This 177-nucleotide RNA was probed chemically with DMS and 2A3. For 2A3, 2,159 sequencing reads were counted. The RNA was probed in 150 mM KOAc, 10 mM MgCl2 and 150 mM bicine (pH 8.5) at 24 C. The DMS profile rests on 1,278 reads.
RNA sequence: GGGAACGACUCGAGUAGAGUCGAAAACUGAGACUUUACGUGCCACUGAAGAGGCGUCUAAGCAGUCUUAUGCUAUUGCCACCAUCAAAGAAAUUGUUGGUGAGCGCCAACUAUUACUUGUGUGGGACAUUUCUACCCUGUUCGCAGGGUAGAAAUGAAAAGAAACAACAACAACAAC
Reactivity to DMS in 0.01 (KOAc 150mM, MgCl2 10mM, bicine 150mM(pH8.5), 24C), signal-to-noise 2, nucleotides 027 to 126: c030u000g010a070g000a070c010u000u010u000a060c190g000u000g000c020c000a140c150u000g030a130a080g020a200g000g000c000g000u000c060u000a110a080g010c170a020g010u000c040u000u000a070u000g020c060u020a080u000u000g000c020c010a080c000c010a010u000c030a040a010a140g010a090a050a070u000u000g000u000u020g000g000u000g010a140g000c170g020c010c010a030a070c060u010a040u000u000a160c070u000u000g000u020g000u000g000g000g000a200
Reactivity to 2A3 in 0.01 (KOAc 150mM, MgCl2 10mM, bicine 150mM(pH8.5), 24C), signal-to-noise 3, nucleotides 027 to 126: c010u000g010a010g050a050c040u030u060u100a020c040g030u000g080c010c010a050c060u100g060a110a000g090a090g100g000c010g040u020c040u070a070a020g030c020a010g000u020c010u070u120a090u120g040c010u100a080u100u190g050c030c010a020c000c000a020u030c030a020a070a060g080a130a130a080u040u020g010u000u000g010g000u030g090a050g030c080g000c020c010a040a060c020u080a030u150u040a060c020u060u050g050u010g010u010g160g010g040a000